This 170-nucleotide RNA was probed chemically with 2A3 and DMS. As a SHAPE reagent, 2A3 marks flexible, mostly unpaired nucleotides at the ribose 2'-OH. It was measured as part of the RMDB library 15KLIB. Values cover nucleotides 27 to 129. 2A3 adducts were read by reverse transcription with SuperScript II with manganese. For DMS the reverse transcriptase was MarathonRT. For 2A3, 12,270 sequencing reads were counted.
[RMDB]
RNA sequence: GGGAACGACUCGAGUAGAGUCGAAAAUUUACGCAAGUUUUAUCAGCAUGUAAUCAAUGGUUGCAAAGAUACGGCAUGCUUGCUCUGCUAUAAGAGGAACCGACUUACUAGAGUUGAAGCUUCUACCUGACCGUUUUGUUCGCAAAACGGAAAAGAAACAACAACAACAAC
Reactivity to 2A3 in 0.01 (KOAc 150mM, MgCl2 10mM, bicine 150mM(pH8.5), 24C), signal-to-noise 6, nucleotides 027 to 129: u010u020u010a030c050g000c020a030a050g020u030u020u090u090a170u120c020a040g000c000a030u010g020u080a090a050u080c080a020a110u120g200g010u090u130g180c050a050a050a030g060a020u050a080c060g050g000c010a000u000g000c000u020u030g040c000u090c100u030g010c010u040a030u020a240a090g020a020g060g000a010a020c020c000g000a010c000u000u010a010c000u030a020g000a000g020u020u030g040a110a010g040c070u030u000c010u060a090c000c000u000g060a010
Reactivity to DMS in 0.01 (KOAc 150mM, MgCl2 10mM, bicine 150mM(pH8.5), 24C), signal-to-noise 2, nucleotides 027 to 129: u020u000u010a100c240g040c100a080a080g000u010u030u010u030a090u050c140a060g050c050a030u030g000u000a070a050u030c030a080a230u000g030g050u010u010g000c040a040a040a200g010a000u020a030c140g000g000c030a000u000g000c040u020u050g020c020u020c080u020g030c060u050a110u000a090a040g030a070g000g000a060a050c210c030g020a040c040u000u000a050c050u020a060g000a040g030u000u000g010a100a120g000c080u000u000c040u050a060c040c040u000g000a170